[RMDB]
RNA sequence: GGGAACGACUCGAGUAGAGUCGAAAACUGCCGGAUUGGCCGACAGUGAGAAAUCAUCGUGUUAGUCGAAGUGGUCUGGAACGGCCUGUCGUAGAGGGUGAGAGUCCCGUAGACGAAAACAUGGUGAGACCUUAAGGUUUUUCGAAACCUUAAGGUCAAAAGAAACAACAACAACAAC
Reactivity to DMS in 0.01 (KOAc 150mM, MgCl2 10mM, bicine 150mM(pH8.5), 24C), signal-to-noise 8, nucleotides 027 to 126: c010u010g010c030c000g000g000a300u030u030g000g050c010c010g010a020c000a010g010u000g030a110g010a060a110a170u000c000a000u000c000g030u010g000u000u000a270g000u000c010g000a000a030g000u020g000g000u000c000u000g000g070a300a030c010g000g000c000c000u000g010u000c010g020u010a020g010a300g000g000g010u000g020a160g000a070g020u000c000c000c000g000u000a300g000a020c010g010a100a080a070a010c020a000u010g010g010u000g000a030
Reactivity to 2A3 in 0.01 (KOAc 150mM, MgCl2 10mM, bicine 150mM(pH8.5), 24C), signal-to-noise 7, nucleotides 027 to 126: c010u010g010c010c000g020g070a190u180u200g210g180c000c000g010a000c000a010g010u040g080a090g100a030a100a040u020c000a000u000c000g010u000g010u020u030a070g010u000c000g000a010a010g030u060g090g000u010c000u010g030g010a010a010c000g010g000c000c010u000g000u000c000g000u000a000g010a030g090g000g000u020g000a010g000a000g010u000c000c000c000g010u000a010g000a000c010g010a050a110a000a010c000a010u010g000g000u010g000a040